[RMDB]
Structure probing data (2A3 and DMS) for a 207-nucleotide construct. For DMS the reverse transcriptase was MarathonRT. Reactivities are rounded to 0.1 and cut off at 0 and 3. It was measured as part of the RMDB library OK3TST. The RNA was probed in 150 mM KOAc, 10 mM MgCl2 and 150 mM bicine (pH 8.5) at 24 C. For 2A3 the reverse transcriptase was SuperScript II with manganese. The 2A3 profile rests on 4,296 reads.
RNA sequence: GGGAACGACUCGAGUAGAGUCGAAAACUGCUAUGCUGAAUAUUGUGCCCUCCAGCCAUGCUUUGCUGUUUGGUGGAGAAGUGCAGUCAAAACUCAAUCCUGAAGGACUGGCUGUCACUUUUACUUUUACUACUACUGUUGAUCGCAAUGAUCCGCAUAUUAUCUUAUGCUUCGGCAUAAGAUAAUAAAAAGAAACAACAACAACAAC
Reactivity to 2A3 in 0.01 (KOAc 150mM, MgCl2 10mM, bicine 150mM(pH8.5), 24C), signal-to-noise 7, nucleotides 027 to 156: c020u030g050c060u090a030u160g030c020u050g080a140a070u160a080u180u150g070u110g060c030c010c000u010c020c010a050g040c000c000a030u060g010c000u130u140u160g040c060u030g030u120u110u030g030g000u030g000g030a060g000a040a000g000u010g000c010a010g000u010c010a030a040a050a100c020u040c040a060a210u160c040c120u190g090a130a050g010g020a030c030u010g000g020c010u030g090u250c050a020c010u040u060u020u060a080c020u020u100u120u060a060c050u030a010c010u010a020c020u020g040u060u040g060a040u050c010g030c160a160a120u200g010a020u030c000c030g000c010a030
Reactivity to DMS in 0.01 (KOAc 150mM, MgCl2 10mM, bicine 150mM(pH8.5), 24C), signal-to-noise 4, nucleotides 027 to 156: c070u000g010c030u000a090u010g020c020u000g010a060a110u010a080u000u010g020u000g020c030c040c040u000c030c050a090g010c030c040a130u010g020c020u000u000u000g020c020u000g010u000u000u010g050g010u000g000g000a100g010a050a030g030u000g010c020a040g000u000c010a030a070a140a200c030u010c010a030a070u010c040c030u010g000a090a040g010g020a210c220u000g010g010c010u010g000u000c020a030c000u010u010u010u000a080c110u000u000u000u000a070c050u000a060c050u000a080c110u010g010u000u000g010a040u000c010g040c050a120a130u000g010a100u000c020c010g010c070a300